[RMDB]
RNA sequence: GGGAACGACUCGAGUAGAGUCGAAAAAACUACUUCUUCGGAAGUAGUUAUUGCGUGGGUCUAAUAAGCCCAAGGUGCCAGGUUCGACCGUUGCUGGGCGCAUCACCGACCGAUUCGUCGGUCGGAAUAUCGCAAGAUCUUUCGAGAUCUUGCGAUAAAAAGAAACAACAACAACAAC
Reactivity to DMS in 0.01 (KOAc 150mM, MgCl2 10mM, bicine 150mM(pH8.5), 24C), signal-to-noise 1, nucleotides 027 to 126: a050a010c000u000a000c000u000u000c000u000u010c260g020g000a010a000g020u000a020g000u000u000a010u000u010g000c080g000u000g000g000g020u000c020u030a130a100u020a080a210g010c000c000c000a010a110g030g000u000g020c040c050a100g010g000u000u010c060g000a120c050c040g020u000u000g010c020u000g000g000g020c030g000c160a070u010c130a150c000c000g000a010c010c010g020a040u000u010c220g000u000c000g000g000u000c000g000g000a040a090